Conditions: 150 mM KOAc, 10 mM MgCl2 and 150 mM bicine (pH 8.5), 24 C. Structure probing data (2A3 and DMS) for a 177-nucleotide construct. 2A3 adducts were read by reverse transcription with SuperScript II with manganese. It was measured as part of the RMDB library M2PK50.
[RMDB]
RNA sequence: GGGAACGACUCGAGUAGAGUCGAAAAUACCGCGUCUUCGGACGCGGUAAGAUCCCGUCGGAAAACCUGAGAGACGGAGAUGAAGAGACUCAAGGUACGCAAUGACUGCCGGAUUCGUCCGGCAGAAGUAUCCAAUGCCAUUCGUGGCAUUGGAUACAAAAGAAACAACAACAACAAC
Reactivity to 2A3 in 0.01 (KOAc 150mM, MgCl2 10mM, bicine 150mM(pH8.5), 24C), signal-to-noise 2, nucleotides 027 to 126: u020a000c000c010g020c000g010u020c000u010u090c230g120g010a020c000g010c000g020g000u000a000a000g000a000u000c000c010c030g010u030c000g060g080a080a120a060a080c000c000u020g000a050g000a000g050a210c080g080g050a170g030a050u150g050a080a110g070a030g020a040c000u010c060a050a030g030g000u030a030c070g000c110a050a140u130g060a120c000u000g010c000c000g000g020a010u040u050c150g060u050c070c010g000g000c020a000g000a000a000
Reactivity to DMS in 0.01 (KOAc 150mM, MgCl2 10mM, bicine 150mM(pH8.5), 24C), signal-to-noise 2, nucleotides 027 to 126: u000a010c000c000g000c000g010u010c010u000u020c150g030g030a020c000g040c010g040g020u010a000a030g010a150u010c010c000c010g010u010c110g020g040a180a040a080a080c040c040u000g000a060g010a100g020a080c080g000g000a060g010a050u000g000a130a100g010a120g000a130c020u010c010a140a110g020g000u000a060c080g000c210a100a040u020g000a210c010u000g000c000c010g020g000a040u000u020c200g030u000c000c020g000g010c000a010g020a030a030